Conditions: 150 mM KOAc, 10 mM MgCl2 and 150 mM bicine (pH 8.5), 24 C. The record gives the reactivity of an RNA of 177 nucleotides to 2A3. For 2A3 the reverse transcriptase was SuperScript II with manganese. The 2A3 profile rests on 285 reads.
RNA sequence: GGGAACGACUCGAGUAGAGUCGAAAACUAUGAAGUGAAACCAACCGGCUCAGCCAGCUCCCUUGUGAAUGGGGUAGUCAGAUUACUCUCAAAACCAUGGGACACUAUCACCAAUGUGACCACGAUGGGUCCGUGUCCUAUUCGUAGGACACGGACCAAAAGAAACAACAACAACAAC
Reactivity to 2A3 in 0.01 (KOAc 150mM, MgCl2 10mM, bicine 150mM(pH8.5), 24C), signal-to-noise 1, nucleotides 027 to 126: c130u040a150u300g060a140a000g130u160g010a010a060a000c010c000a000a000c100c010g000g000c000u000c050a040g000c000c000a050g050c000u020c000c000c120u000u040g040u000g130a120a010u010g000g020g040g000u000a060g060u100c040a110g000a000u020u020a070c090u040c110u180c130a000a000a060a160c100c000a050u250g000g000g000a000c000a000c000u100a110u270c040a000c090c000a040a010u070g110u300g000a020c000c000a000c000g100a090u000g020